[RMDB]
RNA sequence: GGGAACGACUCGAGUAGAGUCGAAAAGCAGCGCCGAUGAUGAGUUCACAAAUGUACUAGGUUGAAUUCUGAUCGAAGAACCUCUCUUGGUUCGAACGAUGGCCACCUGUGUUCCUCUCGAUCUGAGAGCUCAGUGUAUUUUCGAAUACACUGAGCUAAAAGAAACAACAACAACAAC
Reactivity to DMS in 0.01 (KOAc 150mM, MgCl2 10mM, bicine 150mM(pH8.5), 24C), signal-to-noise 6, nucleotides 027 to 126: g010c020a030g020c180g000c040c010g040a110u030g010a100u010g000a020g020u000u020c000a020c050a080a080a120u030g010u040a090c250u010a090g020g010u010u010g010a020a010u010u000c000u000g010a090u010c010g000a090a230g000a020a040c000c000u000c300u030c120u030u010g010g010u000u000c000g010a070a110c060g000a020u020g000g000c030c060a100c180c020u010g000u010g000u000u000c030c010u000c050u000c050g010a070u000c050u000g000a120g000
Reactivity to 2A3 in 0.01 (KOAc 150mM, MgCl2 10mM, bicine 150mM(pH8.5), 24C), signal-to-noise 9, nucleotides 027 to 126: g020c010a000g010c010g020c060c000g060a100u120g010a020u040g010a030g010u010u020c010a010c010a040a170a110u290g120u230a130c080u110a100g180g020u110u050g010a010a020u030u000c010u010g050a030u010c010g010a040a030g010a040a040c010c010u100c010u010c070u120u160g000g000u010u010c000g010a130a030c020g020a030u090g000g000c010c010a050c010c010u020g010u010g020u060u030c010c000u000c010u000c010g170a220u030c020u110g040a060g010
An RNA of 177 nucleotides, treated with DMS and 2A3 and read out base by base.
For DMS the reverse transcriptase was MarathonRT.